[RMDB]
RNA sequence: GGGAACGACUCGAGUAGAGUCGAAAAUAUCUAGUCGGAUCCAUGGUCUCAUCACUAGCGCACGAUCCAUGAGUACAUAGCACUAGUCUAGAGUCUAGGAGUACGCGUCGGUACGCUGAUCACAUGCCCCCGUGGAUCAAUUCGUUGAUCCACGGGGAAAAGAAACAACAACAACAAC
Reactivity to DMS in 0.01 (KOAc 150mM, MgCl2 10mM, bicine 150mM(pH8.5), 24C), signal-to-noise 1, nucleotides 027 to 126: u000a050u000c010u000a080g020u020c050g060g000a090u020c080c030a070u010g010g010u000c040u000c120a200u000c150a070c030u000a020g000c010g050c000a080c120g010a090u010c030c030a070u000g000a150g020u000a000c100a090u000a060g020c070a090c090u000a040g030u000c050u010a080g000a070g000u020c050u010a040g000g000a020g000u000a080c050g010c100g010u010c080g020g000u000a040c040g040c140u000g000a020u000c150a040c150a090u000g000c100
Reactivity to 2A3 in 0.01 (KOAc 150mM, MgCl2 10mM, bicine 150mM(pH8.5), 24C), signal-to-noise 1, nucleotides 027 to 126: u130a000u050c040u040a000g060u110c080g000g010a020u010c010c000a090u080g000g080u000c000u000c040a050u070c030a020c080u050a030g030c060g050c050a040c090g070a000u070c030c030a020u060g020a010g060u080a050c020a090u130a050g040c030a030c060u030a040g030u000c040u130a090g050a000g030u000c010u000a000g010g060a050g130u090a040c090g010c010g070u080c030g000g000u020a010c010g000c060u040g020a060u000c030a050c010a120u150g030c020
About this RNA: An RNA of 177 nucleotides, treated with DMS and 2A3 and read out base by base. DMS adducts were read by reverse transcription with MarathonRT. It was measured as part of the RMDB library OK2TRN. The RNA was probed in 150 mM KOAc, 10 mM MgCl2 and 150 mM bicine (pH 8.5) at 24 C. For 2A3 the reverse transcriptase was SuperScript II with manganese.